[RMDB]
Structure probing data (2A3) for a 177-nucleotide construct. For 2A3, 1,786 sequencing reads were counted. It was measured as part of the RMDB library OK2TST.
RNA sequence: GGGAACGACUCGAGUAGAGUCGAAAACUCGGUGGCGCGCCGGGGAUUCGGUGUCCGAUCCGACCGUUAGUGCCUCGGUAGAUCGCGUCGUGCAGCCUGAGCAGCUGCACGCCUACGUGGCGCUCAAGGUCAGGACACUGUUCGCAGUGUCCUGACCAAAAGAAACAACAACAACAAC
Reactivity to 2A3 in 0.01 (KOAc 150mM, MgCl2 10mM, bicine 150mM(pH8.5), 24C), signal-to-noise 1, nucleotides 027 to 126: c000u010c020g020g060u060g030g040c040g000c000g000c020c020g000g000g030g000a060u090u140c000g060g010u050g080u040c030c130g020a060u030c040c020g050a040c040c000g070u050u110a020g030u070g100c010c000u030c110g100g000u040a060g020a140u220c050g000c050g150u090c010g010u030g000c030a000g020c010c010u140g070a070g030c040a000g020c000u000g020c000a000c000g020c000c010u020a030c030g020u020g020g020c010g020c020u020c030a050a060